RNA sequence: GGGAACGACUCGAGUAGAGUCGAAAACUCGAUCGAUCCUAGUCUAGGAUCGAGUACCAGUCCAUGGCAUGAUCGUCUAGCAUGGUACACCAUGCGUACGAUCGAUCUCUAGUGAUCGUCUAGGUGAACUGGUAGCCAUCUUCGGAUGGCUACCAGUAAAAGAAACAACAACAACAAC
Reactivity to 2A3 in 0.01 (KOAc 150mM, MgCl2 10mM, bicine 150mM(pH8.5), 24C), signal-to-noise 1, nucleotides 027 to 126: c000u000c040g040a030u050c010g000a010u000c000c000u050a040g150u060c120u140a040g010g020a020u010c000g010a000g010u030a040c010c010a040g080u050c030c010a100u050g030g000c090a100u250g000a020u000c010g020u000c020u030a040g000c020a000u010g000g020u130a100c120a160c060c000a000u010g000c030g000u090a010c010g000a020u030c000g010a010u000c010u000c040u140a070g030u060g190a060u140c010g030u000c060u040a070g100g000u050g130a050
Reactivity to DMS in 0.01 (KOAc 150mM, MgCl2 10mM, bicine 150mM(pH8.5), 24C), signal-to-noise 2, nucleotides 027 to 126: c020u000c030g020a040u000c010g000a110u010c010c000u000a060g010u010c200u010a130g030g010a010u010c010g000a010g010u000a060c020c030a060g010u000c130c060a160u010g000g000c160a080u030g010a010u000c000g020u000c070u000a210g010c010a000u000g000g020u000a100c300a160c010c020a000u000g020c000g000u000a010c030g010a030u000c030g010a040u000c010u010c150u020a070g000u000g010a070u000c050g010u000c020u000a030g010g020u000g010a090
Record summary:
Structure probing data (2A3 and DMS) for a 177-nucleotide construct. Values cover nucleotides 27 to 126. The RNA was probed in 150 mM KOAc, 10 mM MgCl2 and 150 mM bicine (pH 8.5) at 24 C. The DMS profile rests on 1,576 reads.